Conditions: 150 mM KOAc, 10 mM MgCl2 and 150 mM bicine (pH 8.5), 24 C.
The record gives the reactivity of an RNA of 177 nucleotides to DMS and 2A3.
It was measured as part of the RMDB libraries RFM100 and RFMREP.
For 2A3 the reverse transcriptase was SuperScript II with manganese.
Reactivities are given for positions 27 through 126.

[RMDB]
RNA sequence: GGGAACGACUCGAGUAGAGUCGAAAAGCGAAUGAUUUUGAAAAGAUGUUGCUUCUGUGACAUUUUUUUUUAAUCAUUUGUGUUUGCAAACGGGAACUUUUCUUGCCAGUGUUAUACAACACAUGCAUAUGGCUCUAAAAUUCGUUUUAGAGCCAUAAAAAGAAACAACAACAACAAC
Reactivity to DMS in 0.01 (KOAc 150mM, MgCl2 10mM, bicine 150mM(pH8.5), 24C), signal-to-noise 6, nucleotides 027 to 126: g000c010g010a010a000u010g000a000u000u000u000u010g000a010a010a010a010g000a000u000g010u000u000g010c000u020u040c250u040g040u010g000a000c000a000u000u000u010u000u010u010u000u000u000a010a010u000c000a010u000u000u000g010u000g010u010u000u010g010c120a060a080a100c130g000g000g010a070a100c160u020u010u010u000c050u000u010g010c040c120a160g010u000g000u000u010a100u040a100c200a030a020c010a010c010a080u010g020c030a160
Reactivity to 2A3 in 0.01 (KOAc 150mM, MgCl2 10mM, bicine 150mM(pH8.5), 24C), signal-to-noise 9, nucleotides 027 to 126: g000c000g000a000a000u000g000a000u030u020u040u050g010a000a000a000a000g020a000u000g000u000u010g010c020u180u190c150u300g010u040g000a000c000a000u020u000u000u000u000u000u000u000u060a000a000u010c000a000u000u000u000g010u000g020u020u200u120g090c100a070a060a070c050g040g010g040a010a050c030u040u040u060u040c040u070u050g020c010c050a050g020u010g030u030u100a230u060a220c100a060a000c010a000c000a050u050g000c010a020